[RMDB]
RNA sequence: GGGAACGACUCGAGUAGAGUCGAAAAUUAUGGUGUUUGAUAUGGAAAUUGUAGAUGAUGAAAUGAUUGGAAGAAUAGAAAAUCUACUGAAGGAGUUUUCUCUCCAAUUACUCCGAGAUGGAGGAAACAGGUACUAAAUAUUCGUAUUUAGUACCUGAAAAGAAACAACAACAACAAC
Reactivity to DMS in 0.01 (KOAc 150mM, MgCl2 10mM, bicine 150mM(pH8.5), 24C), signal-to-noise 6, nucleotides 027 to 126: u010u000a050u010g010g020u000g010u010u000u000g020a110u000a060u000g010g010a070a070a080u000u000g020u000a050g010a080u000g010a100u010g010a080a100a080u000g000a040u000u000g000g010a050a100g010a100a120u010a110g010a070a040a080a050u000c010u010a060c100u010g020a090a120g010g000a060g010u000u000u010u000c030u000c040u000c020c020a040a040u000u000a120c010u000c020c010g000a160g000a110u010g010g000a030g000g000a080a090a200
Reactivity to 2A3 in 0.01 (KOAc 150mM, MgCl2 10mM, bicine 150mM(pH8.5), 24C), signal-to-noise 4, nucleotides 027 to 126: u110u040a050u110g040g000u050g020u070u110u170g080a080u070a070u160g050g050a100a080a040u100u050g010u060a060g010a050u070g020a020u060g060a050a090a060u100g020a030u030u020g030g010a070a030g020a100a090u050a090g030a030a100a010a010u010c010u030a080c030u120g070a100a050g060g000a040g010u000u000u050u030c020u000c000u000c000c000a010a010u030u070a050c000u010c010c010g060a080g030a150u280g010g000a000g020g000a040a040a000